Chemical mapping of a 177-nucleotide RNA with 2A3. It was measured as part of the RMDB library OK2TST. The reactions ran in a buffer of 150 mM KOAc, 10 mM MgCl2 and 150 mM bicine (pH 8.5), at 24 C.
RNA sequence: GGGAACGACUCGAGUAGAGUCGAAAAUUGGUAUAAUUUGAUUGUGAGCUUUUGUUAGUGAAAUUGCAAUGUCGGUUGAUCACGCGAGCAUUGUAGGGGUGUUUAGCAAAUUGACUGGUGGUAGGACGUCCUGUUGCUGUUUCGACAGCAACAGGACAAAAGAAACAACAACAACAAC
Reactivity to 2A3 in 0.01 (KOAc 150mM, MgCl2 10mM, bicine 150mM(pH8.5), 24C), signal-to-noise 1, nucleotides 027 to 126: u050u030g010g060u140a050u030a270a130u220u050u140g060a060u110u000g020u010g100a060g100c000u180u110u090u110g080u100u030a100g000u050g020a040a110a180u060u050g000c040a000a150u020g020u030c000g030g020u020u080g040a130u130c040a020c030g000c020g020a010g000c020a020u010u060g020u020a050g030g000g000g020u000g000u020u000u000a020g000c010a040a070a140u120u070g020a020c010u080g000g010u020g000g060u000a000g020g020a000c040